[RMDB]
RNA sequence: GGGAACGACUCGAGUAGAGUCGAAAACAGUCAAAGUGAAGGCGGGCCAGACCAUCGCCGCAUUCUACCAGAGCACCGUCAUGAUCUUUGGCACGAUGGCUCGCUACAUCCAUAGAGUUAGGGAAAAAUACCAGUCAUGGUUCGCCAUGACUGGUAUAAAAGAAACAACAACAACAAC
Reactivity to 2A3 in 0.01 (KOAc 150mM, MgCl2 10mM, bicine 150mM(pH8.5), 24C), signal-to-noise 2, nucleotides 027 to 126: c020a010g110u090c060a000a000a110g000u000g060a140a040g070g000c000g030g020g000c010c000a010g040a100c020c030a070u060c050g030c090c010g030c000a040u230u000c050u020a100c010c020a050g030a010g080c000a040c150c000g030u090c040a240u160g040a050u060c010u080u010u050g020g020c030a000c040g080a070u050g050g000c010u000c010g000c000u030a020c000a040u030c060c020a040u040a080g100a000g060u020u140a090g030g050g000a000a020a050a050
Reactivity to DMS in 0.01 (KOAc 150mM, MgCl2 10mM, bicine 150mM(pH8.5), 24C), signal-to-noise 3, nucleotides 027 to 126: c180a130g020u010c040a060a060a080g010u000g000a240a080g000g000c010g020g010g030c030c040a120g000a090c100c090a060u000c050g010c050c080g020c100a060u000u000c040u000a070c080c080a080g000a110g000c070a100c040c020g000u020c070a040u000g010a080u000c010u000u000u000g020g000c000a080c130g020a130u010g000g010c010u000c050g000c040u010a070c020a040u000c030c050a110u000a070g000a070g000u000u000a060g030g020g020a010a030a070a080